Chemical mapping of a 177-nucleotide RNA with 2A3 and DMS. The RNA was probed in 150 mM KOAc, 10 mM MgCl2 and 150 mM bicine (pH 8.5) at 24 C. The 2A3 profile rests on 4,368 reads. 2A3 adducts were read by reverse transcription with SuperScript II with manganese.
[RMDB]
RNA sequence: GGGAACGACUCGAGUAGAGUCGAAAAAGCUGCUGCAUCAGGGACUGAGGCACCGAAGAUCUUUGCGCCCAAGGAAGGAGCAGAGAAGUUCACCUUCCAGGCGGAGGUCAACAGGCUGAUGGACAUCCGAGGGGGAAUAAUUCGUUAUUCCCCCUCGAAAAGAAACAACAACAACAAC
Reactivity to 2A3 in 0.01 (KOAc 150mM, MgCl2 10mM, bicine 150mM(pH8.5), 24C), signal-to-noise 3, nucleotides 027 to 126: a000g030c020u060g020c010u010g020c010a050u020c020a080g050g020g030a030c030u040g010a050g050g020c010a030c050c040g070a080a040g010a020u000c010u060u080u230g130c020g000c000c000c010a050a030g010g000a020a000g000g020a020g020c090a000g060a010g070a220a040g020u050u080c060a080c060c010u000u020c000c000a000g000g000c000g010g000a010g010g000u010c000a020a020c000a030g040g010c010u050g000a030u050g040g000a010c010a040u000c020
Reactivity to DMS in 0.01 (KOAc 150mM, MgCl2 10mM, bicine 150mM(pH8.5), 24C), signal-to-noise 5, nucleotides 027 to 126: a060g010c040u000g020c050u000g010c040a080u000c080a080g020g010g010a080c050u000g010a160g010g010c060a090c050c040g000a090a180g000a050u000c010u000u010u010g010c030g010c000c010c100a160a110g020g000a030a020g000g020a100g020c100a110g000a100g020a090a120g000u000u000c130a130c020c000u000u000c000c020a110g010g010c030g010g010a060g000g010u000c010a050a180c110a100g000g030c050u000g000a090u000g000g000a060c090a110u000c070
As a SHAPE reagent, 2A3 marks flexible, mostly unpaired nucleotides at the ribose 2'-OH. Reactivities are given for positions 27 through 126.